[RMDB]
RNA sequence: GGGAACGACUCGAGUAGAGUCGAAAACAACAGCGUAAUCGUGGCUUGACGUGAUCGAGUUACGAUUGACUGAAUGGUAACUAUAUUGUCUGUCAUAGACAAUACGCUGUUCUAAUGACAGUGGGACGAUAUAGUUUUAUUUCGAUAGGACUAUAUCAAAAGAAACAACAACAACAAC
Reactivity to DMS in 0.01 (KOAc 150mM, MgCl2 10mM, bicine 150mM(pH8.5), 24C), signal-to-noise 9, nucleotides 027 to 126: c040a070a160c020a010g000c090g020u020a010a010u000c000g010u000g000g000c010u000u000g000a030c080g020u040g000a170u000c000g010a000g010u000u000a000c000g000a010u000u010g000a100c030u000g000a120a090u020g000g010u020a050a060c060u010a040u000a000u000u000g000u000c000u000g000u010c100a080u020a040g000a010c010a050a060u020a050c080g010c040u000g000u010u010c080u020a100a090u030g000a010c010a040g010u010g010g010g010a080c090
Reactivity to 2A3 in 0.01 (KOAc 150mM, MgCl2 10mM, bicine 150mM(pH8.5), 24C), signal-to-noise 9, nucleotides 027 to 126: c020a000a010c010a000g040c050g200u120a020a030u010c000g000u000g010g000c010u010u010g010a020c030g270u150g070a300u020c010g000a000g000u000u000a000c000g010a000u000u010g030a020c010u030g030a030a060u090g060g010u080a030a010c020u010a030u010a010u070u030g010u000c020u010g070u050c020a050u050a040g010a000c000a010a010u030a020c020g000c020u010g010u040u000c020u100a140a100u140g020a000c000a010g010u030g010g040g020a020c030

About this RNA:
An RNA of 177 nucleotides, treated with DMS and 2A3 and read out base by base. Reactivities are rounded to 0.1 and cut off at 0 and 3. For 2A3, 52,966 sequencing reads were counted.